[RMDB]
RNA sequence: GGGAACGACUCGAGUAGAGUCGAAAACGGACCACCGGUGGCGAAAGCGCCUCAGGAAGACGGAUCCGACGGUGAGGGACGAAAGCUCGGGUCACGAACCGGAUUAGAUACCCGGGUAGUCCGAGCUCUUAAGAGUAAACUUCGGUUUACUCUUAAGAAAAGAAACAACAACAACAAC
Reactivity to DMS in 0.01 (KOAc 150mM, MgCl2 10mM, bicine 150mM(pH8.5), 24C), signal-to-noise 5, nucleotides 027 to 126: c030g020g010a110c050c030a090c040c030g000g030u010g000g020c030g000a120a150a190g030c060g010c030c010u000c070a090g020g020a090a110g010a110c110g020g000a120u000c020c020g000a130c060g000g000u000g000a120g010g000g010a090c100g000a050a100a070g010c010u000c000g000g010g000u010c160a060c020g000a120a290c000c000g000g000a050u000u010a130g010a170u010a120c140c000c000g010g000g000u010a110g000u000c000c010g010a020g000c020u000
Reactivity to 2A3 in 0.01 (KOAc 150mM, MgCl2 10mM, bicine 150mM(pH8.5), 24C), signal-to-noise 3, nucleotides 027 to 126: c010g010g010a000c000c010a010c000c030g040g050u050g020g000c010g120a230a170a070g300c060g020c020c010u020c020a010g050g050a080a030g110a060c100g010g060a160u030c000c010g010a010c010g040g010u100g030a130g000g040g030a020c040g050a190a030a010g000c000u000c000g030g010g010u060c070a000c010g010a020a020c000c000g000g000a010u020u060a090g050a090u100a120c010c000c010g000g020g000u040a010g010u000c000c000g000a000g040c010u010